The data come from the RNA Mapping Database (RMDB), library OK2TST. This 177-nucleotide RNA was probed chemically with DMS and 2A3. For DMS, 9,077 sequencing reads were counted.

[RMDB]
RNA sequence: GGGAACGACUCGAGUAGAGUCGAAAAGGCGCUUCUGGAAGGUCGCGAUCUGCUGUUCGCCCGACUGCUGCAAUACCGCGCGUUCAAGCGCGUUGCGCAGAUAUUCGCCGAGUUGGAAGCCACCGCAAUCCCUGCUAAAUUUCGAUUUAGCAGGGAUAAAAGAAACAACAACAACAAC
Reactivity to DMS in 0.01 (KOAc 150mM, MgCl2 10mM, bicine 150mM(pH8.5), 24C), signal-to-noise 8, nucleotides 027 to 126: g020g010c250g010c060u000u000c040u010g010g020a130a160g000g000u000c080g020c060g010a050u000c040u000g020c120u010g000u000u000c070g000c040c090c060g010a110c050u010g000c020u010g000c000a040a160u010a120c290c090g020c000g010c000g000u010u010c270a110a190g010c010g020c020g010u000u000g000c250g000c000a020g000a060u010a050u000u000c070g020c040c010g010a060g010u010u010g000g000a060a090g000c020c060a110c050c030g010c180a110
Reactivity to 2A3 in 0.01 (KOAc 150mM, MgCl2 10mM, bicine 150mM(pH8.5), 24C), signal-to-noise 4, nucleotides 027 to 126: g050g000c050g030c090u030u050c030u100g080g060a100a060g070g020u110c040g000c010g040a070u020c030u150g050c070u160g060u080u040c010g020c020c010c010g040a050c020u040g030c030u070g000c010a000a030u020a150c080c070g000c010g000c000g100u170u280c160a160a060g000c000g000c000g010u010u020g010c000g000c000a010g030a030u080a080u060u090c040g030c010c030g000a050g030u120u120g090g000a010a000g000c000c020a040c040c010g010c030a030

Conditions: 150 mM KOAc, 10 mM MgCl2 and 150 mM bicine (pH 8.5), 24 C.